Structure probing data (2A3 and DMS) for a 177-nucleotide construct. DMS adducts were read by reverse transcription with MarathonRT. For 2A3, 17,413 sequencing reads were counted. It was measured as part of the RMDB library RFMREP. High DMS reactivity at an A or C suggests that its Watson-Crick edge is free.
RNA sequence: GGGAACGACUCGAGUAGAGUCGAAAAAGGUGAUUUCUCCUGCACCUUUAUCAAUGGAGGAACUCGACUUUGCUGUGGGUCCCAAAGGGACCUUAGGUGCAGACAGUUACCGGCGGUGAAGUGUGAGCCAUAUUUAGAAGUUCGCUUCUAAAUAUGGAAAAGAAACAACAACAACAAC
Reactivity to 2A3 in 0.01 (KOAc 150mM, MgCl2 10mM, bicine 150mM(pH8.5), 24C), signal-to-noise 7, nucleotides 027 to 126: a010g000g000u010g000a030u030u040u030c010u010c000c010u180g090c020a010c010c000u110u290u100a040u020c040a010a040u300g020g000a010g000g020a030a020c010u000c020g020a010c010u020u020u020g000c020u020g010u110g030g000g000u000c010c000c030a160a140a080g000g000g000a010c000c000u020u080a030g000g000u010g000c000a040g100a300c030a030g020u070u100a010c000c010g040g000c020g000g030u020g020a010a010g050u100g090u090g050a010g050
Reactivity to DMS in 0.01 (KOAc 150mM, MgCl2 10mM, bicine 150mM(pH8.5), 24C), signal-to-noise 7, nucleotides 027 to 126: a030g000g020u000g000a300u000u000u000c020u000c010c010u010g020c040a000c000c000u000u000u010a030u000c300a020a050u010g000g010a030g020g000a040a300c050u000c020g000a030c020u000u000u000g010c010u000g030u010g010g010g010u000c000c000c010a080a110a130g020g010g010a010c010c000u000u000a020g010g020u000g010c040a110g020a100c200a080g010u000u000a040c030c020g010g000c050g010g010u000g000a020a030g010u000g020u010g010a040g010